[RMDB]
The record gives the reactivity of an RNA of 177 nucleotides to DMS and 2A3. For 2A3 the reverse transcriptase was SuperScript II with manganese. DMS adducts were read by reverse transcription with MarathonRT. For DMS, 5,387 sequencing reads were counted. The 2A3 profile rests on 12,189 reads. The reactions ran in a buffer of 150 mM KOAc, 10 mM MgCl2 and 150 mM bicine (pH 8.5), at 24 C. Source: RMDB library OK1LIB, as collected in RNAgym.
RNA sequence: GGGAACGACUCGAGUAGAGUCGAAAAGAAGAGAAUACGGUGUAAGAACAGCCCAACUUACACCGUGCGGCAUAACGGAAACAGUGAUGUCGAAAUUUGGGCUGAUCGUGAAUGAACGAAAGAAGAACCACCUACUCAUAUUCGUAUGAGUAGGUGGAAAAGAAACAACAACAACAAC
Reactivity to DMS in 0.01 (KOAc 150mM, MgCl2 10mM, bicine 150mM(pH8.5), 24C), signal-to-noise 3, nucleotides 027 to 126: g040a170a140g030a100g000a170a120u020a020c000g000g000u000g000u020a020a030g000a050a110c060a090g020c000c000c010a110a090c000u000u000a010c000a010c000c000g040u000g000c010g000g040c040a020u020a090a000c020g000g000a090a190a160c100a120g020u000g000a000u000g030u000c000g020a120a050a110u000u000u000g010g000g000c000u010g010a060u010c020g030u020g010a070a130u000g010a110a040c000g020a020a080a150g000a110a090g000a090a140
Reactivity to 2A3 in 0.01 (KOAc 150mM, MgCl2 10mM, bicine 150mM(pH8.5), 24C), signal-to-noise 6, nucleotides 027 to 126: g140a030a020g130a010g070a090a020u070a040c000g010g000u000g000u000a000a000g040a170a040c000a020g010c000c000c010a030a060c010u000u000a000c000a000c000c000g000u010g000c000g000g000c000a010u020a040a040c020g100g090a260a130a050c060a120g030u040g060a020u000g000u000c000g010a040a060a040u150u100u060g010g000g000c000u010g030a050u040c020g000u030g120a150a210u170g020a120a020c010g030a060a050a130g140a020a020g030a030a030